An RNA of 207 nucleotides, treated with 2A3 and DMS and read out base by base.

[RMDB]
RNA sequence: GGGAACGACUCGAGUAGAGUCGAAAAGUGCCAGAGAAGUUGUAUAUUGGGCUACCAUCCAGUGAUGCAAUGGAGGCUUAUUAGGGUUGUCAGUUUUCCAUAGGGUAGCAAUUAAAACUGUCUGAAAAAAACGAAACCACCUUCGGGUGGUUUCGAACGAUAGAUCAAUCUUCGGAUUGAUCUAUCGAAAAGAAACAACAACAACAAC
Reactivity to 2A3 in 0.01 (KOAc 150mM, MgCl2 10mM, bicine 150mM(pH8.5), 24C), signal-to-noise 2, nucleotides 027 to 156: g020u000g000c010c000a040g010a000g060a300a010g020u070u040g060u010a080u040a060u070u060g030g000g000c010u020a030c000c000a020u030c010c000a060g040u090g110a060u040g040c020a030a060u050g000g000a010g010g010c080u140u050a090u060u140a110g060g000g000u010u020g010u020c000a010g010u000u020u260u070c010c030a090u070a040g060g030g000u000a000g010c020a050a040u090u120a030a020a000a010c010u010g010u010c000u010g010a060a110a000a000a000a000a000c000g000a020a000a000c000c000a010c000c010u030u070c170g100g010g000u000g020g000u000u000u000c000g000a000a010
Reactivity to DMS in 0.01 (KOAc 150mM, MgCl2 10mM, bicine 150mM(pH8.5), 24C), signal-to-noise 1, nucleotides 027 to 156: g000u010g010c050c020a130g000a170g000a060a300g000u010u000g030u000a100u000a190u000u010g010g010g060c060u000a100c100c060a110u020c020c020a070g000u000g000a100u000g000c000a100a050u000g020g020a120g000g020c040u020u000a070u020u020a170g040g010g000u010u000g000u010c000a030g010u000u000u020u000c010c020a080u010a240g000g020g000u010a060g000c000a050a180u000u010a050a070a100a010c030u000g020u000c000u000g000a000a000a110a130a040a130a260c020g010a000a000a040c000c000a020c000c010u000u020c300g070g100g010u020g000g010u000u000u000c000g000a010a060

For 2A3 the reverse transcriptase was SuperScript II with manganese. For 2A3, 769 sequencing reads were counted. Source: RMDB library M2RFPK, as collected in RNAgym. The reactions ran in a buffer of 150 mM KOAc, 10 mM MgCl2 and 150 mM bicine (pH 8.5), at 24 C.